[RMDB]
RNA sequence: GGGAACGACUCGAGUAGAGUCGAAAAGGUCUCUCAGCUCCGCUUAACCACACGGGUCCAGUGUGUGCUUGGCGUGUUUUCAGGGAGGCAGAGAAAGGCUCUCCUAAUGCACGACAGACCCGCCCAGUACCUACAUUGACUUCGGUCAAUGUAGGUAAAAAGAAACAACAACAACAAC
Reactivity to 2A3 in 0.01 (KOAc 150mM, MgCl2 10mM, bicine 150mM(pH8.5), 24C), signal-to-noise 9, nucleotides 027 to 126: g020g000u000c000u010c010u010c050a010g000c010u020c020c010g010c020u040u050a030a020c020c020a100c040a090c190g190g020g020u040c010c020a030g010u020g020u010g010u030g070c010u060u070g020g000c030g020u020g020u020u120u030u110c090a030g000g000g020a010g030g000c030a030g040a010g060a130a140a040g170g010c030u040c010u010c170c000u030a050a020u070g000c010a010c020g060a030c020a010g020a020c010c010c000g030c010c000c000a020g040
Reactivity to DMS in 0.01 (KOAc 150mM, MgCl2 10mM, bicine 150mM(pH8.5), 24C), signal-to-noise 5, nucleotides 027 to 126: g000g000u000c010u010c120u000c070a050g000c010u000c030c000g000c020u010u010a160a090c040c010a100c180a120c190g000g020g000u030c120c180a050g020u000g010u020g010u020g000c040u010u010g010g000c030g000u000g000u010u000u000u010c150a140g000g000g000a030g010g010c010a090g010a140g010a100a150a150g000g000c020u020c000u000c010c010u000a050a050u010g000c020a020c040g010a060c150a070g000a040c000c010c020g000c000c000c010a180g020

Conditions: 150 mM KOAc, 10 mM MgCl2 and 150 mM bicine (pH 8.5), 24 C. The record gives the reactivity of an RNA of 177 nucleotides to 2A3 and DMS. The data come from the RNA Mapping Database (RMDB), libraries RFM100 and RFMREP.